[RMDB]
RNA sequence: GGGAACGACUCGAGUAGAGUCGAAAAGCCUCUAGCGUUUGCAAAACGCUGUUUGCGCAAUGAUCUGGAUUUAGCGCAAGUAGGUCCGAAAUCCAGAUGAACAUUUCGGACAACCGCGCUAAUUAAAUUCUUUGGAAUAAUUCGUUAUUCCAAAGAAAAAAGAAACAACAACAACAAC
Reactivity to DMS in 0.01 (KOAc 150mM, MgCl2 10mM, bicine 150mM(pH8.5), 24C), signal-to-noise 8, nucleotides 027 to 126: g000c010c010u000c100u010a020g010c010g010u000u000u000g020c290a100a090a030a010c020g020c010u000g000u010u000u000g010c130g020c090a080a090u010g000a110u000c040u000g010g010a120u000u000u000a030g010c000g020c000a070a100g020u000a080g020g010u000c000c000g010a010a010a010u000c120c090a170g010a180u010g000a100a110c200a060u000u000u000c000g000g000a020c010a050a050c160c140g020c000g010c010u000a010a020u000u000a030a080a130
Reactivity to 2A3 in 0.01 (KOAc 150mM, MgCl2 10mM, bicine 150mM(pH8.5), 24C), signal-to-noise 2, nucleotides 027 to 126: g010c010c000u020c060u070a010g020c010g030u000u030u180g150c070a110a130a000a030c050g000c030u010g040u050u140u070g020c090g000c030a120a210u150g050a090u080c050u080g070g070a090u030u050u060a010g000c000g010c000a010a000g050u090a040g070g050u020c000c000g010a000a010a000u020c070c030a090g060a200u030g000a060a010c010a030u000u000u020c000g000g000a000c020a030a000c030c040g020c000g010c010u010a000a040u070u080a040a070a070
An RNA of 177 nucleotides, treated with DMS and 2A3 and read out base by base. Source: RMDB library M2PK90, as collected in RNAgym. The RNA was probed in 150 mM KOAc, 10 mM MgCl2 and 150 mM bicine (pH 8.5) at 24 C.